[RMDB]
RNA sequence: GGGAACGACUCGAGUAGAGUCGAAAAAAACUUUUGUGACUUGCUGAAACGGGACUAAUCUCCUCACCGAGGCUAAGCAAGUCAAAUACGCCUCUCAUAUCCUUACCUGAGGGUGGUAAGGAAAUAACCUGCAACGCUUCCUUCGGGAAGCGUUGAAGUCUAACAAUCACUUCGGUGAUUGUUAGACAAAAGAAACAACAACAACAAC
Reactivity to 2A3 in 0.01 (KOAc 150mM, MgCl2 10mM, bicine 150mM(pH8.5), 24C), signal-to-noise 2, nucleotides 027 to 156: a000a000a000c150u190u100u030u090g120u020g010a000c000u020u010g000c000u030g060a070a080a100c060g000g000g010a000c010u060a050a070u080c030u030c040c010u040c040a030c010c040g020a000g070g000c040u030a010a000g000c000a000a010g000u010c010a000a000a020u090a020c060g030c000c010u020c000u000c060a030u020a050u240c000c000u000u000a000c000c010u040g090a060g020g040g030u030g020g000u000a000a000g010g000a000a040a010u020a010a020c040c110u100g050c010a000a000c000g010c010u000u000c010c010u000u050c060g090g000g000a010a010g000c010g000u000u000g000a000a000